[RMDB]
RNA sequence: GGGAACGACUCGAGUAGAGUCGAAAACGCCAGCGGUCCCCUCUUUGGGGCCCCAGCUUCAGUGAAGACAAGGGGUUUCGGCCUUUUGAACGCACUGAUGCCCUGACGCUGCUUCAUUACGGAGCUGGCUUUAUGGUUCCUUCGGGAACCAUAAAGCAAAAGAAACAACAACAACAAC
Reactivity to DMS in 0.01 (KOAc 150mM, MgCl2 10mM, bicine 150mM(pH8.5), 24C), signal-to-noise 1, nucleotides 027 to 126: c080g000c000c030a010g030c230g010g000u020c000c040c000c020u000c300u000u000u000g010g080g020g040c030c020c040c020a070g020c000u010u000c000a060g000u000g010a030a020g000a260c030a090a260g000g000g020g000u000u000u000c040g080g000c110c080u010u020u000u000g000a080a240c300g000c010a000c080u010g000a000u000g000c000c030c000u020g000a070c200g000c050u010g000c000u000u000c030a160u030u000a090c270g040g000a000g000c010u000g000
Reactivity to 2A3 in 0.01 (KOAc 150mM, MgCl2 10mM, bicine 150mM(pH8.5), 24C), signal-to-noise 3, nucleotides 027 to 126: c050g080c000c020a030g030c050g060g040u130c020c010c000c000u060c050u070u160u200g010g000g010g000c010c010c000c000a010g030c010u000u000c000a010g000u000g000a010a010g010a060c010a020a050g000g010g010g000u000u010u060c060g070g000c000c000u050u140u040u140g140a130a030c010g010c020a040c070u050g000a000u000g000c020c000c020u050g010a050c090g040c080u120g020c000u010u020c020a090u040u200a050c150g020g000a010g000c000u010g000